Structure probing data (2A3 and DMS) for a 207-nucleotide construct.
The RNA was probed in 150 mM KOAc, 10 mM MgCl2 and 150 mM bicine (pH 8.5) at 24 C.

[RMDB]
RNA sequence: GGGAACGACUCGAGUAGAGUCGAAAAAUCAUCUGAAGAUCAGCUAUUAGAAGAGAAAGAUCAGUUAAGACCUUUGGACCUGAUCAGCUUGAUACAAGAACUACUGAUUUCAACUUCUUUGGCUUAAAAAAGGCCACAGAGUUCGCUCUGUGGCCAACAAUUUCUUAAGGUUCGCCUUAAGAAAUUGAAAAGAAACAACAACAACAAC
Reactivity to 2A3 in 0.01 (KOAc 150mM, MgCl2 10mM, bicine 150mM(pH8.5), 24C), signal-to-noise 2, nucleotides 027 to 156: a000u050c020a030u050c060u160g090a110a050g080a140u090c040a020g020c010u060a090u200u060a300g030a040a010g010a000g040a020a060a000g020a020u010c010a010g000u040u060a100a040g050a120c040c010u070u100u200g050g030a080c020c040u070g020a070u080c040a020g090c070u070u100g020a010u090a150c040a010a030g010a110a020c040u080a010c000u080g010a020u000u000u070c060a080a050c010u000u000c010u000u020u010g010g000c000u000u030a000a050a050a000a000a020g000g000c020c020a000c030a010g000a010g000u060u110c120g050c090u000c000u000g010u010g000g000c000c000a000a000
Reactivity to DMS in 0.01 (KOAc 150mM, MgCl2 10mM, bicine 150mM(pH8.5), 24C), signal-to-noise 1, nucleotides 027 to 156: a120u010c020a050u000c030u000g030a100a120g000a140u000c080a040g000c030u000a070u000u000a050g010a030a010g010a220g000a110a090a030g020a020u010c020a160g010u010u010a080a130g020a070c050c030u000u040u030g010g030a070c070c020u000g040a090u000c030a100g010c040u000u000g000a100u000a160c050a070a100g010a030a070c050u000a070c010u000g010a030u000u000u000c030a110a190c030u000u010c010u000u000u010g020g000c010u000u000a000a040a090a110a090a130g010g030c000c010a010c040a070g020a040g050u000u020c300g050c010u010c010u010g000u020g030g000c020c000a000a050
Background:
2A3 is a SHAPE reagent: it acylates the 2'-hydroxyl of flexible nucleotides of all four kinds.